[RMDB]
RNA sequence: GGGAACGACUCGAGUAGAGUCGAAAAGUCUUGAAGGUCGAGGGAAUGACCUCAGCCUGCCACUGAGGGCUAACUGUGGCGUGAGUGUUGGCUCCAGGAGGUGCCAGUGGGAGGGCACUGGAGAGGGCUCUCAUGUACCGUUCGCGGUACAUGAGAGAAAAGAAACAACAACAACAAC
Reactivity to 2A3 in 0.01 (KOAc 150mM, MgCl2 10mM, bicine 150mM(pH8.5), 24C), signal-to-noise 3, nucleotides 027 to 126: g030u010c020u070u070g090a070a010g030g000u050c050g040a040g050g040g080a140a300u180g070a100c000c010u010c000a000g020c010c020u070g040c020c020a030c020u040g030a210g030g090g000c040u040a050a020c030u030g030u060g100g000c070g010u130g080a100g010u150g090u140u220g090g000c010u000c000c020a030g050g010a060g050g050u070g060c010c020a000g000u040g030g020g020a060g000g010g000c030a030c030u040g000g020a080g000a010g030g020g010
Reactivity to DMS in 0.01 (KOAc 150mM, MgCl2 10mM, bicine 150mM(pH8.5), 24C), signal-to-noise 3, nucleotides 027 to 126: g000u000c010u000u000g010a160a080g010g010u000c070g010a070g020g010g030a150a130u010g000a130c030c000u010c010a120g010c020c020u010g000c030c040a170c040u000g000a130g030g000g000c030u000a040a170c030u000g020u000g010g030c040g020u010g010a110g000u000g000u000u000g010g010c010u000c020c020a080g010g010a200g040g010u000g010c010c030a040g010u000g000g000g000a100g000g020g030c060a020c040u000g010g020a110g000a050g000g000g000